Overview: Chemical mapping of a 177-nucleotide RNA with DMS and 2A3. For 2A3, 8,173 sequencing reads were counted. DMS adducts were read by reverse transcription with MarathonRT. Values cover nucleotides 27 to 126. It was measured as part of the RMDB library OK1LIB. For 2A3 the reverse transcriptase was SuperScript II with manganese.
RNA sequence: GGGAACGACUCGAGUAGAGUCGAAAAUGCAGCGCACAUGCGAGACACAUCGACCACGGUUCGAAAGAAGGCCCGGUGGUCCGCGGGCAACAUCACCAGGUGCGCAAGCGCCCGGGCGUCCAGAGGGGACGUGAAUAGUGUUCGCACUAUUCACGUCAAAAGAAACAACAACAACAAC
Reactivity to DMS in 0.01 (KOAc 150mM, MgCl2 10mM, bicine 150mM(pH8.5), 24C), signal-to-noise 5, nucleotides 027 to 126: u040g000c030a100g000c040g000c010a020c050a110u040g000c070g000a100g000a100c080a080c080a080u000c090g010a140c030c060a120c150g000g050u010u000c040g020a110a120a080g030a110a120g020g020c090c040c040g020g040u010g010g000u010c010c060g010c060g030g000g000c100a070a070c100a100u010c110a080c060c020a080g000g000u000g020c020g020c050a060a100g020c010g020c010c010c030g000g000g010c070g020u000c020c010a120g000a120g000g000g000
Reactivity to 2A3 in 0.01 (KOAc 150mM, MgCl2 10mM, bicine 150mM(pH8.5), 24C), signal-to-noise 4, nucleotides 027 to 126: u170g000c010a010g000c010g020c000a000c000a070u100g030c050g070a060g050a020c080a000c000a110u050c040g020a020c020c020a070c060g040g070u080u060c030g070a130a110a070g120a050a070g070g010c040c050c000g020g020u050g000g030u000c010c010g030c040g000g030g010c050a090a030c010a160u100c010a010c050c030a030g000g070u010g010c020g000c020a030a030g020c020g020c020c000c000g000g020g000c020g030u000c020c020a020g020a070g080g030g020